[RMDB]
RNA sequence: GGGAACGACUCGAGUAGAGUCGAAAAGAUGUUGGAUGCCUUGAGGACGAUUCCUGGAAUUCACGACAGCAGUACGAUAUAAGCCAUGUGUCCCUCAACCAGGCGUCUGCGACAUAUUGCACAGGAGAGUGAGAGGGCUAGAGGAAUGGCAUACCAGCUUAAUUAUUCCGUUCGCGGAAUAAUUAAGAAAAGAAACAACAACAACAAC
Reactivity to 2A3 in 0.01 (KOAc 150mM, MgCl2 10mM, bicine 150mM(pH8.5), 24C), signal-to-noise 3, nucleotides 027 to 156: g080a010u090g040u060u050g020g010a010u050g020c010c010u040u080g040a040g040g030a010c060g040a070u060u100c020c030u000g050g040a040a040u150u060c070a030c100g080a040c040a070g040c030a030g080u110a040c060g020a020u030a030u040a250a070g040c030c010a070u070g040u010g010u060c010c020c020u020c010a020a070c020c060a030g000g050c020g020u040c040u050g060c010g030a020c010a030u200a040u100u260g020c050a050c030a030g020g050a050g020a000g050u050g020a100g020a010g020g000g010c010u040a040g030a030g020g050a080a030u030g010g000c020a010u020a040c040c010a010g020
Reactivity to DMS in 0.01 (KOAc 150mM, MgCl2 10mM, bicine 150mM(pH8.5), 24C), signal-to-noise 3, nucleotides 027 to 156: g020a150u010g020u000u000g010g010a060u010g020c010c030u010u000g020a110g020g000a050c040g030a130u010u000c020c000u000g010g020a060a120u010u000c030a130c050g000a100c040a100g050c070a070g080u000a090c070g010a180u000a120u000a090a100g000c030c020a090u010g000u000g000u000c030c030c030u000c030a060a190c030c060a130g010g000c060g040u000c030u000g030c020g030a070c070a040u000a060u000u030g030c060a070c060a100g000g000a070g030a150g020u020g000a100g000a110g050g020g060c040u000a090g010a100g030g010a070a050u000g020g000c010a120u000a100c010c030a180g000
Overview: The record gives the reactivity of an RNA of 207 nucleotides to 2A3 and DMS. 2A3 adducts were read by reverse transcription with SuperScript II with manganese. For 2A3, 1,809 sequencing reads were counted. Reactivities are rounded to 0.1 and cut off at 0 and 3. For DMS the reverse transcriptase was MarathonRT. The DMS profile rests on 4,287 reads. Reactivities are given for positions 27 through 156.